[RMDB]
RNA sequence: GGGAACGACUCGAGUAGAGUCGAAAACAAAGCAGGGCUUACCUGCCUGGACCGUCCUGGAGCGUGGAGCUAAGUGCAAUGAGCAUACAUCAUGGCCAGAAGUUGCAUUUGGACACUGGCCGAGUACGAGUGCAAUUGAUGGAUCACCGAAAACCGAGAGUAAAUGAGGUUUCGACCUCAUUUACUCAAAAGAAACAACAACAACAAC
Reactivity to DMS in 0.01 (KOAc 150mM, MgCl2 10mM, bicine 150mM(pH8.5), 24C), signal-to-noise 1, nucleotides 027 to 156: c020a140a160a080g000c000a060g020g020g050c170u000u000a070c010c010u010g020c010c000u000g000g000a070c040c050g030u000c000c020u010g030g070a120g000c110g040u090g020g010a070g000c050u010a090a060g020u000g060c080a050a100u030g010a150g010c010a090u000a050c020a050u000c060a110u010g020g000c000c000a050g000a300a090g030u000u000g010c020a130u000u020u000g000g000a300c110a090c010u010g000g060c040c000g050a070g010u000a050c070g010a060g040u000g000c040a070a090u000u040g000a200u000g000g000a060u000c000a110c050c010g010a030a020a110a170c020c000g000a300
Reactivity to 2A3 in 0.01 (KOAc 150mM, MgCl2 10mM, bicine 150mM(pH8.5), 24C), signal-to-noise 3, nucleotides 027 to 156: c070a030a090a010g020c040a030g000g070g040c090u180u140a190c000c010u030g010c000c000u020g020g020a030c010c010g060u070c020c000u050g070g020a040g030c000g010u020g000g030a020g000c030u030a020a030g030u040g040c040a060a070u070g030a040g050c040a020u040a130c010a040u080c030a140u190g020g010c000c000a020g010a300a010g090u050u060g090c020a030u090u050u170g030g000a010c020a010c030u020g110g000c020c010g010a010g000u030a010c090g000a000g060u010g000c060a010a040u090u060g030a080u040g000g000a030u160c060a070c140c010g080a010a080a050a030c060c020g130a120
Conditions: 150 mM KOAc, 10 mM MgCl2 and 150 mM bicine (pH 8.5), 24 C. Chemical mapping of a 207-nucleotide RNA with DMS and 2A3.